[RMDB]
RNA sequence: GGGAACGACUCGAGUAGAGUCGAAAAGAAGAGAAUACCGGUGUAAGUGCAGCCCGUCUUACACCGUAAGGCACAGCGGAAACGCUGAUGUGAAAUACAGGGCUGAGAGACGGAAGUAGACCGUCAAGCAUAAUUACCUGUUCGCAGGUAAUUAUGCAAAAGAAACAACAACAACAAC
Reactivity to 2A3 in 0.01 (KOAc 150mM, MgCl2 10mM, bicine 150mM(pH8.5), 24C), signal-to-noise 9, nucleotides 027 to 126: g130a030a020g100a000g050a090a070u110a140c050c010g000g000u000g000u000a010a020g000u030g100c030a000g000c000c000c000g010u000c000u000u000a000c000a000c000c000g000u040a030a060g150g000c010a000c000a010g000c000g020g020a080a080a020c020g000c010u000g010a130u010g010u010g070a060a040a000u250a060c130a090g000g000g000c010u010g020a030g010a010g000a020c000g030g010a130a120g110u160a040g080a090c000c010g000u000c020a000a010
Reactivity to DMS in 0.01 (KOAc 150mM, MgCl2 10mM, bicine 150mM(pH8.5), 24C), signal-to-noise 3, nucleotides 027 to 126: g000a120a100g000a080g020a160a020u010a060c220c060g000g020u000g000u030a010a000g000u000g030c040a020g000c000c020c000g000u010c000u000u000a000c000a000c000c000g000u020a060a080g000g070c020a040c000a010g000c030g000g000a150a100a190c000g010c020u010g000a060u000g020u010g000a120a110a070u060a080c170a110g000g000g010c000u000g020a160g020a170g000a000c000g000g010a050a090g020u030a070g000a090c010c000g000u000c020a070a140
Structure probing data (2A3 and DMS) for a 177-nucleotide construct. 2A3 adducts were read by reverse transcription with SuperScript II with manganese. The RNA was probed in 150 mM KOAc, 10 mM MgCl2 and 150 mM bicine (pH 8.5) at 24 C.